[RMDB]
Structure probing data (2A3 and DMS) for a 177-nucleotide construct. Values cover nucleotides 27 to 126. For 2A3, 5,878 sequencing reads were counted.
RNA sequence: GGGAACGACUCGAGUAGAGUCGAAAAGAUAUGGACUGUGACCCGAAGUCUGCUGCUCGGAAACGAGCAGAACUACACGUCCUUCGCACAGUCCUAAGUCAAAGCAGUCGGCUUCGGCCGACUGCAAGAACAGAUGUAACUUCGGUUACAUCUGUUCAAAAGAAACAACAACAACAAC
Reactivity to 2A3 in 0.01 (KOAc 150mM, MgCl2 10mM, bicine 150mM(pH8.5), 24C), signal-to-noise 2, nucleotides 027 to 126: g020a010u020a010u070g000g000a000c010u020g000u030g110a170c040c130c160g000a020a000g140u070c090u110g070c000u000g000c000u030c000g020g000a030a030a040c000g000a000g030c010a010g000a000a020c030u180a050c120a020c170g210u260c040c000u000u000c020g010c000a010c000a000g000u040c000c010u000a050a000g000u040c030a040a020a170g030c000a010g020u010c000g040g010c000u070u200c300g170g000c010c000g000a000c010u000g000c000a010a010
Reactivity to DMS in 0.01 (KOAc 150mM, MgCl2 10mM, bicine 150mM(pH8.5), 24C), signal-to-noise 3, nucleotides 027 to 126: g010a000u000a150u010g000g000a010c000u000g000u010g000a260c300c300c150g030a040a010g000u010c150u000g000c010u010g000c000u000c000g010g000a060a040a100c000g000a000g020c000a000g000a020a040c110u010a140c150a110c230g010u000c200c010u000u010c000g010c000a040c000a010g000u000c000c000u010a010a050g010u000c020a080a100a090g010c010a000g000u000c000g020g020c020u010u010c280g040g000c000c000g000a010c000u010g000c000a000a020

It was measured as part of the RMDB library TTRDEL.